Background: An RNA of 177 nucleotides, treated with DMS and read out base by base. It was measured as part of the RMDB library TTRINS. The RNA was probed in 150 mM KOAc, 10 mM MgCl2 and 150 mM bicine (pH 8.5) at 24 C.

RNA sequence: GGGAACGACUCGAGUAGAGUCGAAAAGAUAUGGAUCCCAUCGUUAUUCCCGUAGAGCGAUAAGAACUUCUCGGAAACGAGAAAGUUCUUUUGACGCUUGAAGGGAAUAACGAUGGGAUCCUAAGUCGAAUUAAUCACAGUUCGCUGUGAUUAAUUCAAAAGAAACAACAACAACAAC
Reactivity to DMS in 0.01 (KOAc 150mM, MgCl2 10mM, bicine 150mM(pH8.5), 24C), signal-to-noise 4, nucleotides 027 to 126: g000a110u010a300u000g010g010a010u000c000c000c000a000u000c000g020u010u000a000u000u000c010c000c000g010u010a300g010a000g000c000g010a250u000a020a010g000a000a000c000u000u000c010u000c000g010g000a130a110a190c000g010a000g000a030a020a040g010u000u000c000u000u000u000u010g020a250c080g010c000u000u000g000a190a300g010g000g000a010a010u000a000a000c010g000a000u000g000g010g000a000u000c000c000u000a010a080g020u010c110